[RMDB]
RNA sequence: GGGAACGACUCGAGUAGAGUCGAAAAGAGACCAUUGCAGAAAACCACAGCCUAUCAAAGUGCAGAGUUGUGCAACACAGUCCCAAUGGAUACAUCUACAAAACAACUCCUGCAUCCAGUGCUCAGAGAACAUUGUGGAGGAAGCGGGAGAAAGACAUCCCAUUUUAUACUUCGGUAUAAAAUGGGAAAAAGAAACAACAACAACAAC
Reactivity to DMS in 0.01 (KOAc 150mM, MgCl2 10mM, bicine 150mM(pH8.5), 24C), signal-to-noise 1, nucleotides 027 to 156: g000a160g000a140c020c020a120u000u000g000c020a120g040a090a080a130a080c090c050a120c050a120g020c030c000u000a150u000c040a110a080a240g000u000g040c040a040g000a080g020u000u000g010u000g010c060a080a030c070a090c020a140g000u000c010c020c040a170a080u000g010g020a100u000a050c050a120u000c070u000a190c050a020a060a070a120c000a020a100c040u000c000c060u010g000c050a180u030c040c010a010g030u000g010c030u000c020a200g000a300g000a100a040c040a020u000u000g030u000g040g030a120g020g010a100a180g000c080g060g040g010a060g030a080a010a080g030a010c050a110
Reactivity to 2A3 in 0.01 (KOAc 150mM, MgCl2 10mM, bicine 150mM(pH8.5), 24C), signal-to-noise 2, nucleotides 027 to 156: g070a000g010a010c010c010a040u000u040g030c080a030g040a080a080a000a040c080c000a020c020a010g010c000c040u160a130u190c090a240a130a060g010u140g030c010a020g010a000g070u070u050g000u010g000c010a070a030c040a000c020a080g030u040c000c020c000a020a030u060g010g040a060u070a090c040a060u100c050u110a160c050a050a140a060a000c030a010a010c000u020c030c000u010g000c000a000u040c010c000a000g020u020g020c000u050c040a040g050a000g060a170a050c040a060u130u170g070u090g110g010a040g020g040a090a060g000c000g000g010g000a040g080a020a020a100g250a000c020a020